RNA sequence: GGGAACGACUCGAGUAGAGUCGAAAAACAGCGCGGCGAUGACCACCACGACCCACAUCGCCGUCGACGGCCCCUGGCCGUUGAUCGUCGCAUGCCCGCCGUUCUGACUUCCAAACUGCCGGGUCAGCUGCGUAUAGUACUUCGGUACUAUACGCAGAAAAGAAACAACAACAACAAC
Reactivity to DMS in 0.01 (KOAc 150mM, MgCl2 10mM, bicine 150mM(pH8.5), 24C), signal-to-noise 3, nucleotides 027 to 126: a240c100a060g050c030g030c030g030g020c010g010a040u000g000a110c120c080a090c090c080a080c140g020a100c000c010c040a280c020a030u000c010g010c010c010g000u000c010g010a020c000g000g010c000c000c120c220u010g020g010c000c010g030u000u000g010a020u010c130g010u010c020g000c030a080u000g000c020c020c020g010c080c050g000u000u000c020u000g010a110c060u000u010c060c070a040a070a090c110u000g000c080c060g020g010g020u010c030a090g010
Reactivity to 2A3 in 0.01 (KOAc 150mM, MgCl2 10mM, bicine 150mM(pH8.5), 24C), signal-to-noise 2, nucleotides 027 to 126: a020c030a020g020c020g000c030g020g040c020g010a030u030g040a070c040c020a050c060c000a130c190g040a050c020c010c010a010c020a010u000c010g000c020c010g020u010c000g020a000c010g020g010c000c020c010c060u220g000g000c010c000g000u000u020g000a000u060c020g250u130c020g020c020a000u080g010c020c010c010g040c020c010g040u070u000c040u050g100a110c060u120u060c050c000a110a100a110c040u090g040c080c090g000g000g070u040c010a030g000